[RMDB]
Background
Structure probing data (2A3 and DMS) for a 177-nucleotide construct. It was measured as part of the RMDB library OK2TRN. For 2A3, 20,451 sequencing reads were counted. DMS adducts were read by reverse transcription with MarathonRT. The RNA was probed in 150 mM KOAc, 10 mM MgCl2 and 150 mM bicine (pH 8.5) at 24 C.
RNA sequence: GGGAACGACUCGAGUAGAGUCGAAAACUCACGUUGCAGCGUCCACCAGGCCAGCCCACUGCUCAGAGUGGGGCUGGGGGUAGGAGCACCCCGCGCCCUCUGGAGCCGUUACAUAACGUGGGGAGGCCUAUAUCAUCGAUUUCGAUCGAUGAUAUAGAAAAGAAACAACAACAACAAC
Reactivity to 2A3 in 0.01 (KOAc 150mM, MgCl2 10mM, bicine 150mM(pH8.5), 24C), signal-to-noise 8, nucleotides 027 to 126: c010u010c010a020c040g050u040u140g040c060a040g010c010g070u010c020c040a140c050c020a220g030g030c020c000a020g030c050c000c000a020c020u050g030c030u030c070a060g010a010g110u200g040g050g020g000c030u110g040g000g000g010g010u040a090g030g110a040g020c030a070c000c000c000c010g000c030g060c000c000c000u020c010u030g050g040a010g010c020c020g050u060u070a040c020a130u210a150a030c040g010u030g000g010g010g000a040g030g010c000
Reactivity to DMS in 0.01 (KOAc 150mM, MgCl2 10mM, bicine 150mM(pH8.5), 24C), signal-to-noise 9, nucleotides 027 to 126: c010u000c020a070c070g010u000u000g010c050a040g010c030g010u000c020c040a090c070c070a060g000g010c010c010a080g010c000c000c010a030c020u000g010c070u000c090a080g000a030g030u010g030g010g010g020c000u010g030g010g010g000g010u000a110g020g010a130g020c110a180c020c010c000c010g010c060g000c010c000c010u010c010u000g010g010a110g010c030c170g010u000u010a060c140a110u010a060a050c080g010u000g010g000g000g000a180g000g000c040